[RMDB]
RNA sequence: GGGAACGACUCGAGUAGAGUCGAAAACAGAAUACAUGAUGAUCUCAAUCCAACUUGAACUCUCUCACUGAUUACUUGAUGACAAUAAAAUAUCUGAUAUUCUGAAACUUCCAACUUCGGUUGGAAGGCCUACAUAUUAGUUCGCUAAUAUGUAGGCAAAAGAAACAACAACAACAAC
Reactivity to 2A3 in 0.01 (KOAc 150mM, MgCl2 10mM, bicine 150mM(pH8.5), 24C), signal-to-noise 9, nucleotides 027 to 126: c010a000g050a060a020u080a050c050a060u140g020a030u040g050a080u050c010u010c040a030a070u010c030c020a020a050c040u040u060g030a060a040c010u020c000u010c010u010c100a030c060u050g050a150u080u130a070c040u060u060g040a050u110g030a060c030a050a050u140a180a140a060a030u150a040u020c030u030g070a100u020a080u110u020c000u010g000a050a040a040c000u000u000c010c000a000a000c000u030u030c090g090g000u000u000g000g000a000a000g010
Reactivity to DMS in 0.01 (KOAc 150mM, MgCl2 10mM, bicine 150mM(pH8.5), 24C), signal-to-noise 5, nucleotides 027 to 126: c050a070g010a080a040u010a070c060a060u010g020a050u000g000a100u000c030u000c050a060a070u000c060c090a060a080c100u010u000g010a070a110c070u000c040u000c040u010c040a110c110u000g010a090u000u000a070c090u010u010g000a090u000g000a060c060a050a100u010a060a060a110a090u000a030u000c020u000g000a130u000a050u010u000c020u010g000a060a070a300c010u000u000c000c000a000a010c000u000u000c110g030g020u000u000g000g000a010a000g000
Background:
This 177-nucleotide RNA was probed chemically with 2A3 and DMS. 2A3 adducts were read by reverse transcription with SuperScript II with manganese. The reactions ran in a buffer of 150 mM KOAc, 10 mM MgCl2 and 150 mM bicine (pH 8.5), at 24 C. In probing experiments dimethyl sulfate is read out at A N1 and C N3, which are open when not base-paired.